The record gives the reactivity of an RNA of 207 nucleotides to 2A3.
RNA sequence: GGGAACGACUCGAGUAGAGUCGAAAAACAUAGGCCAUGCUUACGAGCAUGGCCUAUGACGAAUCUCAAGCAAUCAAGCAUUCUACUUCUACUGCAACACUGAGGAGCUUACGAGCUCCUCAGUGAAAAAAGAGAGUAAUGUUCGCAUUACUCUCAAGAGUGGUAAAUUGUUCGCAAUUUACCACUCAAAAGAAACAACAACAACAAC
Reactivity to 2A3 in 0.01 (KOAc 150mM, MgCl2 10mM, bicine 150mM(pH8.5), 24C), signal-to-noise 1, nucleotides 027 to 156: a000c030a010u020a030g000g020c010c000a000u000g060c030u130u010a100c200g080a040g000c000a010u010g000g040c000c000u000a000u000g000a010c000g100a020a030u040c030u030c050a080a020g050c000a070a140u210c010a110a000g010c040a110u080u090c090u080a180c040u110u090c030u040a180c070u050g050c000a110a020c000a090c000u000g000a000g000g000a000g030c000u120u090a060c220g010a070g020c000u000c020c000u000c000a000g000u030g000a000a000a000a000a000a000g000a000g000a000g000u000a000a000u030g000u000u020c030g010c010a000u010u000a000c000u000c000u000c000a000a000